The record gives the reactivity of an RNA of 207 nucleotides to 2A3 and DMS.
Conditions: 150 mM KOAc, 10 mM MgCl2 and 150 mM bicine (pH 8.5), 24 C.
The data come from the RNA Mapping Database (RMDB), library RNAMAK.
The DMS profile rests on 1,639 reads.
Reactivities are given for positions 27 through 156.
Reactivities are rounded to 0.1 and cut off at 0 and 3.

[RMDB]
RNA sequence: GGGAACGACUCGAGUAGAGUCGAAAAUCUGGAUUCGUCCAGAAAAGAGGGGUCGACAGUGACUCCUAUAAUCCAUGAACUACUUCUGAAGCCUCCACGGAAGCAUGGGUAGGAGGAGCUGUCGACGGAGGCACCCAGGAGCCGACUUCGGUCGGAAGAAUCCCUCUUUAUUCGUAAAGAGGGAUUCAAAAGAAACAACAACAACAAC
Reactivity to 2A3 in 0.01 (KOAc 150mM, MgCl2 10mM, bicine 150mM(pH8.5), 24C), signal-to-noise 4, nucleotides 027 to 156: u000c000u020g010g000a010u060u070c140g060u090c060c000a010g100a030a060a010a020g210a130g000g020g000g000u040c020g000a000c010a020g030u020g190a060c010u000c000c000u050a080u080a030a000u010c000c000a010u010g010a070a110c090u170a070c000u260u000c010u020g010a030a010g010c000c000u000c010c000a030c020g000g000a000a000g000c000a000u000g040g050g000u020a050g040g020a000g000g020a050g000c000u010g010u010c010g000a000c010g000g000a000g000g000c000a020c020c010c000a030g120g070a020g140c070c000g000a010c020u060u090c260g100g000u000c000g020g010a010a030
Reactivity to DMS in 0.01 (KOAc 150mM, MgCl2 10mM, bicine 150mM(pH8.5), 24C), signal-to-noise 1, nucleotides 027 to 156: u010c010u060g000g030a040u000u010c300g090u000c000c000a010g030a050a020a030a160g010a210g010g040g000g070u000c020g010a060c050a000g010u010g000a300c010u010c000c010u000a050u010a090a030u000c060c070a080u020g000a040a160c080u000a300c040u000u000c000u000g000a010a180g010c000c010u000c040c050a300c040g000g020a000a000g000c020a060u000g010g000g010u020a000g060g010a080g040g000a300g000c060u000g000u000c000g000a010c070g010g070a060g100g040c010a060c020c010c020a250g010g000a190g000c000c010g000a030c020u000u010c300g060g000u010c000g000g040a000a100